[RMDB]
RNA sequence: GGGAACGACUCGAGUAGAGUCGAAAAUAAAGCUGCGAAUAAACGUCGCAUCCGUUGUGCGAUGACAUUAUUGUCAGCGGAGCGCAGCUAAAGCAAUCGUUGCUUUACGUAGCAUUUUGCUGACGUAGUCAGUCAGGCUGUUCGCAGCCUGACUGACAAAAGAAACAACAACAACAAC
Reactivity to DMS in 0.01 (KOAc 150mM, MgCl2 10mM, bicine 150mM(pH8.5), 24C), signal-to-noise 2, nucleotides 027 to 126: u040a060a120a070g010c070u030g020c000g020a020a020u000a080a050a230c080g000u000c000g000c020a040u030c130c170g010u000u000g020u010g000c000g050a110u010g000a100c120a050u000u030a050u080u000g010u000c000a010g030c030g010g000a070g060c000g020c000a250g000c050u010a100a050a010g000c040a080a140u000c300g000u000u030g000c030u010u030u000a100c080g020u020a090g000c030a010u000u010u000u020g000c010u000g000a030c000g000u000a050
Reactivity to 2A3 in 0.01 (KOAc 150mM, MgCl2 10mM, bicine 150mM(pH8.5), 24C), signal-to-noise 4, nucleotides 027 to 126: u230a020a060a010g000c010u030g020c030g020a070a050u150a120a100a050c040g030u010c010g010c030a040u040c060c170g120u060u280g000u020g010c010g010a040u020g020a040c030a060u020u170a020u060u180g010u000c000a000g000c010g030g000a010g010c000g000c030a020g000c000u030a040a010a000g000c000a000a070u150c160g200u160u080g010c000u050u040u050a050c110g050u080a040g060c060a110u030u050u020u140g000c000u020g000a000c010g000u020a060